[RMDB]
RNA sequence: GGGAACGACUCGAGUAGAGUCGAAAAGCUAGGCAUUUCGAUGCCUAGCGAGCGCAGAGUCUAUGCAUCUCUGAAUCACACAACAGCCGUGUCUAAGCGUGGGAGUAUCCCUCUUCGGAGGGAUAAACGAAAUACUAAGUUUCGACUUAGUAUUUCGAAAAGAAACAACAACAACAAC
Reactivity to DMS in 0.01 (KOAc 150mM, MgCl2 10mM, bicine 150mM(pH8.5), 24C), signal-to-noise 9, nucleotides 027 to 126: g010c000u000a000g000g010c000a010u000u000u020c170g010a030u000g010c000c000u000a000g010c000g000a050g020c130g010c030a050g010a070g010u010c070u000a090u010g010c110a100u000c020u000c020u000g000a100a090u010c080a070c060a050c070a060a090c120a080g010c040c070g010u000g010u010c060u010a080a090g010c080g010u000g000g000g010a130g010u000a020u000c000c000c000u000c000u000u010c180g020g010a020g000g010g000a000u000a000a050a160
Reactivity to 2A3 in 0.01 (KOAc 150mM, MgCl2 10mM, bicine 150mM(pH8.5), 24C), signal-to-noise 9, nucleotides 027 to 126: g000c000u000a000g010g000c010a000u020u070u140c230g100a010u010g000c000c000u000a000g010c000g000a020g000c100g000c010a010g010a010g050u010c040u120a150u200g050c040a110u050c010u000c000u030g050a090a070u110c030a030c010a010c010a090a130c010a070g060c020c040g080u060g040u060c050u090a080a050g020c020g040u060g020g050g000a060g020u030a010u010c000c010c000u000c000u020u040c190g080g000a000g000g000g000a000u010a000a010a000
Chemical mapping of a 177-nucleotide RNA with DMS and 2A3. For DMS, 36,692 sequencing reads were counted. DMS adducts were read by reverse transcription with MarathonRT.